Chemical mapping of a 207-nucleotide RNA with DMS and 2A3.
The RNA was probed in 150 mM KOAc, 10 mM MgCl2 and 150 mM bicine (pH 8.5) at 24 C.
RNA sequence: GGGAACGACUCGAGUAGAGUCGAAAAUUGUCGUCAAUGGGCAUGGUGGACAAGAUACCGGUAGCUCUGACCUCCAAGUCGAUGGAACCAUCGUUAACGAACUUGAAGUUGAGGGCGUACUCGUAGUUAGCCACGGUUGCGAUGGUCUGGACGACGAGGAUAUAUGCCAAUUCGUUGGCAUAUAUCCAAAAGAAACAACAACAACAAC
Reactivity to DMS in 0.01 (KOAc 150mM, MgCl2 10mM, bicine 150mM(pH8.5), 24C), signal-to-noise 3, nucleotides 027 to 156: u010u000g020u000c000g030u000c050a150a110u010g000g000g030c030a110u000g010g080u000g010g040a170c060a100a080g020a200u000a120c060c030g000g040u000a140g000c040u000c010u030g020a120c120c000u000c010c030a040a100g000u010c030g030a130u000g000g000a070a030c050c040a080u000c020g010u000u000a050a080c030g020a050a060c040u010u000g000a090a120g010u000u000g010a090g010g000g000c030g010u000a010c040u000c140g010u010a080g020u000u000a190g000c000c020a030c010g020g020u000u000g000c000g010a070u000g000g020u010c030u000g030g010a110c030g000a040c050g010a120
Reactivity to 2A3 in 0.01 (KOAc 150mM, MgCl2 10mM, bicine 150mM(pH8.5), 24C), signal-to-noise 6, nucleotides 027 to 156: u060u080g010u010c000g000u010c030a060a100u140g030g020g000c020a040u050g020g010u020g020g030a070c060a160a080g040a070u100a070c040c050g090g040u080a030g020c020u030c010u030g040a050c000c000u000c020c010a030a010g040u040c020g050a090u120g080g050a080a050c050c010a000u030c030g020u070u260a060a030c040g030a040a020c040u060u150g070a140a050g110u130u130g060a160g030g010g000c030g020u040a020c030u040c140g090u040a080g040u040u110a020g020c010c020a040c040g060g020u040u040g000c000g010a030u030g040g010u030c020u040g040g010a010c000g000a000c000g000a030
The DMS profile rests on 8,095 reads. The 2A3 profile rests on 4,993 reads. For 2A3 the reverse transcriptase was SuperScript II with manganese.